[RMDB]
RNA sequence: GGGAACGACUCGAGUAGAGUCGAAAACUCACCACCAAGCAUCUCUAUGCUGCGCUGUCUUACAACCUCCACGUCCUGGAUAUUCAAAACCCGUGACCGUCAGGGCCACCCCUGCCUGUGGGCCAAGCCCUAGUUGUAGCUUCGGCUACAACUAGGGAAAAGAAACAACAACAACAAC
Reactivity to DMS in 0.01 (KOAc 150mM, MgCl2 10mM, bicine 150mM(pH8.5), 24C), signal-to-noise 2, nucleotides 027 to 126: c070u000c040a080c050c080a090c070c070a100a100g000c030a030u000c130u000c160u000a040u000g000c060u000g000c030g040c050u000g000u000c010u010u010a080c120a020a170c090c010u000c010c020a060c090g000u000c030c030u000g000g000a030u000a050u000u040c190a070a040a120a130c030c020c020g000u000g000a090c030c020g000u000c040a090g020g010g040c060c080a080c080c030c020c060u000g010c070c070u000g010u010g010g000g000c080c080a060a090g020
Reactivity to 2A3 in 0.01 (KOAc 150mM, MgCl2 10mM, bicine 150mM(pH8.5), 24C), signal-to-noise 1, nucleotides 027 to 126: c000u020c030a020c000c000a030c000c020a030a020g040c000a080u000c030u000c010u240a040u120g000c020u010g010c060g000c020u040g040u070c010u010u130a110c080a060a200c050c000u080c030c020a050c060g020u000c010c070u000g050g000a060u020a130u210u200c070a030a120a070a070c000c010c020g030u010g070a020c060c040g030u050c010a040g010g040g090c080c000a020c000c010c000c030u010g020c010c020u070g010u070g110g060g000c000c040a040a010g010